[RMDB]
RNA sequence: GGGAACGACUCGAGUAGAGUCGAAAAUUACUCACACUAUGUCUUGGGUCAUAACCACUGUUCCUGGGAACCUCCGUAUGGCGUGGCAAUGUCGCCAUUGUAUCUCCCUCCAGAUAUCAGUGCAGACCGCGUGAUCAUCAUUCGUGAUGAUCACGCGAAAAGAAACAACAACAACAAC
Reactivity to 2A3 in 0.01 (KOAc 150mM, MgCl2 10mM, bicine 150mM(pH8.5), 24C), signal-to-noise 3, nucleotides 027 to 126: u070u050a100c000u010c030a020c000a030c050u110a040u190g090u020c040u100u160g030g030g000u020c020a040u040a130a030c010c020a030c080u050g050u070u040c030c020u010g050g010g000a100a100c000c030u030c010c020g060u150a050u070g050g000c010g000u010g090g000c020a050a170u260g080u220c000g000c000c000a040u000u060g030u020a140u010c050u010c020c000c030u010c010c000a030g030a040u090a060u150c030a000g030u050g110c040a010g020a010c010
An RNA of 177 nucleotides, treated with 2A3 and read out base by base. 2A3 adducts were read by reverse transcription with SuperScript II with manganese. The RNA was probed in 150 mM KOAc, 10 mM MgCl2 and 150 mM bicine (pH 8.5) at 24 C. For 2A3, 1,153 sequencing reads were counted.